Conditions: 150 mM KOAc, 10 mM MgCl2 and 150 mM bicine (pH 8.5), 24 C. An RNA of 177 nucleotides, treated with DMS and 2A3 and read out base by base. For DMS the reverse transcriptase was MarathonRT. For 2A3 the reverse transcriptase was SuperScript II with manganese. Reactivities are given for positions 27 through 126. For 2A3, 11,616 sequencing reads were counted.
RNA sequence: GGGAACGACUCGAGUAGAGUCGAAAAGGCAUACCCUACAAACGCUCGGGCCCAAGGUGCUGGCUUCUCGAAUGGUGCGCGACUACGUCGAGCAUUACUACGCGCCGGCGGCGCAGUCUUUUCGCCGCCUAAUGGGAAAGUUCGCUUUCCCAUUAGGAAAAGAAACAACAACAACAAC
Reactivity to DMS in 0.01 (KOAc 150mM, MgCl2 10mM, bicine 150mM(pH8.5), 24C), signal-to-noise 8, nucleotides 027 to 126: g000g010c050a110u000a120c030c010c020u010a130c120a070a110a120c130g000c070u000c070g010g000g030c050c030c040a100a090g010g010u000g010c050u000g010g010c050u000u000c040u000c040g010a080a120u010g000g020u000g010c030g010c030g010a040c030u010a100c190g010u000c020g010a040g010c040a040u000u000a060c090u000a110c070g000c150g020c090c050g010g010c020g010g000c020g010c090a080g000u000c040u000u000u000u000c000g020c040c020g000
Reactivity to 2A3 in 0.01 (KOAc 150mM, MgCl2 10mM, bicine 150mM(pH8.5), 24C), signal-to-noise 6, nucleotides 027 to 126: g040g000c020a060u080a200c000c000c010u050a060c080a080a160a010c070g010c040u040c040g030g040g010c010c030c020a040a040g060g010u060g020c030u020g050g010c010u070u030c050u060c040g090a090a090u140g030g010u030g020c040g000c010g040a020c020u280a070c150g040u020c010g010a010g010c000a000u020u080a050c060u050a040c030g010c020g010c010c000g040g000c010g010g000c020g010c010a010g020u040c030u030u090u020u040c020g000c000c000g000